[RMDB]
RNA sequence: GGGAACGACUCGAGUAGAGUCGAAAAGCUCAUCAGUUCGCUGAUGAGCAAAGAGUGCGCGGCAGCACAAGAAGAGCCGAAGAAAUGCAGAGCCGACUGCAAAAAUCCCGCCCUUCGGGGCGGGAAACUAAACUCUGAUGUUCGCAUCAGAGUUUAGAAAAGAAACAACAACAACAAC
Reactivity to DMS in 0.01 (KOAc 150mM, MgCl2 10mM, bicine 150mM(pH8.5), 24C), signal-to-noise 1, nucleotides 027 to 126: g030c000u000c000a040u000c000a020g030u010u020c220g030c000u000g020a020u000g030a000g000c000a020a040a070g020a210g010u010g040c020g000c010g030g000c030a270g060c040a020c000a120a080g010a080a070g000a200g000c010c000g030a060a070g010a060a040a130u000g020c000a010g000a200g010c010c080g010a220c000u000g000c010a000a090a190a150a120u000c000c000c030g000c000c000c000u000u000c200g040g010g010g000c020g020g000g010a000a020a040
An RNA of 177 nucleotides, treated with DMS and read out base by base. The DMS profile rests on 620 reads.